Chemical mapping of a 177-nucleotide RNA with DMS and 2A3. It was measured as part of the RMDB library OK2TRN. Values cover nucleotides 27 to 126. The reactions ran in a buffer of 150 mM KOAc, 10 mM MgCl2 and 150 mM bicine (pH 8.5), at 24 C.
RNA sequence: GGGAACGACUCGAGUAGAGUCGAAAAGGACCGUUCGACCUGACCCUGCUGCCCAUCGGGGCCUACAACACGGCGUGGCCGGACAUCCACAUGAACCCCGAGGAGGCGGUCCGGGCGCACCUGGACGGAUGGACAAGCAUUUCGAUGCUUGUCCAUCAAAAGAAACAACAACAACAAC
Reactivity to DMS in 0.01 (KOAc 150mM, MgCl2 10mM, bicine 150mM(pH8.5), 24C), signal-to-noise 2, nucleotides 027 to 126: g000g020a170c020c020g000u010u020c000g020a060c020c060u000g020a120c010c010c000u000g010c050u010g020c000c000c020a160u000c020g010g000g050g040c060c030u000a050c080a040a070c180a110c130g010g000c080g010u000g020g030c040c050g020g010a090c140a050u000c070c080a030c060a190u000g000a150a200c010c000c010c010g010a030g010g050a230g010g010c030g000g000u010c030c060g040g030g030c060g000c100a010c080c060u020g000g000a010c050g020
Reactivity to 2A3 in 0.01 (KOAc 150mM, MgCl2 10mM, bicine 150mM(pH8.5), 24C), signal-to-noise 1, nucleotides 027 to 126: g040g000a070c020c030g030u030u030c060g040a040c030c020u050g130a180c000c020c000u020g030c020u020g010c000c000c010a060u030c010g010g000g040g040c000c000u180a100c040a240a000c070a040c100g040g010c180g130u120g070g030c000c000g000g000a020c020a040u060c000c000a130c020a080u140g060a080a120c000c000c000c000g030a010g050g000a120g030g000c030g000g000u010c000c070g000g000g000c060g010c000a080c030c030u090g050g020a000c010g010